[RMDB]
RNA sequence: GGGAACGACUCGAGUAGAGUCGAAAAGUGUUCUGCCUCUGCCUGCUAAACCCGGGCUUGACUGUUCUCUGGACCGCGCAUCGAAUGAAGACUGCAGCCGAGACGUUCUCGAAGCUUCAGGCGUUCACCAGGAAGAAGAAGAUCGCGCCGCACGUUCUAAGCCACUUUUAUUCGUAAAAGUGGCUUAAAAAGAAACAACAACAACAAC
Reactivity to 2A3 in 0.01 (KOAc 150mM, MgCl2 10mM, bicine 150mM(pH8.5), 24C), signal-to-noise 2, nucleotides 027 to 156: g060u070g050u050u050c050u060g040c030c000u090c000u020g040c000c000u020g010c070u070a090a120a110c030c000c020g050g010g000c000u030u080g030a060c030u030g090u160u030c060u030c020u050g000g060a080c020c010g050c010g050c020a000u020c020g060a200a150u050g040a020a070g030a020c040u020g010c070a040g030c000c000g000a000g000a020c040g040u080u030c040u000c020g090a070a070g010c010u040u090c070a040g000g030c050g020u060u070c080a050c120c000a000g060g010a040a000g010a040a000g030a030a040g000a020u050c040g000c020g020c070c000g040c020a020c070g210u250u280c300
Reactivity to DMS in 0.01 (KOAc 150mM, MgCl2 10mM, bicine 150mM(pH8.5), 24C), signal-to-noise 2, nucleotides 027 to 156: g030u000g000u000u000c010u020g000c020c010u000c010u000g010c010c010u000g000c030u010a070a120a120c070c070c030g040g000g010c020u000u030g010a090c030u000g020u000u000c040u000c010u050g020g010a080c030c020g050c050g030c110a120u000c060g000a170a110u010g010a130a120g000a030c000u000g000c060a060g020c010c010g020a190g050a090c040g010u000u010c040u010c020g010a090a050g020c040u000u000c030a000g030g000c020g020u000u010c020a080c120c020a130g020g000a080a080g020a050a140g000a050a090g000a060u000c010g020c030g000c020c010g010c080a080c100g000u010u010c020